[RMDB]
The record gives the reactivity of an RNA of 207 nucleotides to DMS and 2A3.
RNA sequence: GGGAACGACUCGAGUAGAGUCGAAAAGGGAGAUUCCUCUGAUUGGUAAUGACGGGAAACCUUUACUUGGAACUAAGCGAAGCCAGUAUACGAUCGUAAUCAUGGAGAUGAUGCGUCGCUGUAAAGAGAUUCACGGGCAUGACCUCAGAAUAUUUGGUGAUCAGUAUGAGUUCGCUCAUACUGAUCAAAAAGAAACAACAACAACAAC
Reactivity to DMS in 0.01 (KOAc 150mM, MgCl2 10mM, bicine 150mM(pH8.5), 24C), signal-to-noise 4, nucleotides 027 to 156: g000g000g000a170g010a180u000u000c030c010u000c030u000g000a110u000u010g000g010u000a040a040u000g000a100c120g020g000g010a040a040a030c040c020u000u000u000a020c030u030u000g020g020a100a290c090u010a100a110g040c110g030a090a150g000c030c020a120g040u000a130u000a040c000g010a050u000c080g060u010a050a060u000c000a050u010g010g020a220g010a160u000g010a040u010g000c040g000u000c010g050c010u010g020u000a010a060a050g010a050g010a030u000u000c030a030c020g000g010g020c020a050u010g010a120c020c010u010c020a050g000a050a110u000a130u000u000u000g010g020
Reactivity to 2A3 in 0.01 (KOAc 150mM, MgCl2 10mM, bicine 150mM(pH8.5), 24C), signal-to-noise 5, nucleotides 027 to 156: g070g030g010a110g030a110u030u050c010c020u010c040u010g080a130u170u170g020g010u050a070a020u040g020a020c010g000g000g030a020a020a060c000c000u030u020u030a010c020u050u050g050g020a070a050c040u090a150a120g090c100g120a060a010g040c020c010a030g030u060a070u030a100c020g030a060u180c040g020u060a200a110u020c020a020u040g080g020a220g040a060u030g000a000u010g010c000g010u010c010g000c040u030g010u040a000a030a010g030a010g010a030u000u040c030a020c050g010g080g010c040a010u020g030a030c000c010u010c010a010g060a080a040u170a180u150u110u110g140g000
Source: RMDB library OK3TST, as collected in RNAgym. The 2A3 profile rests on 4,603 reads.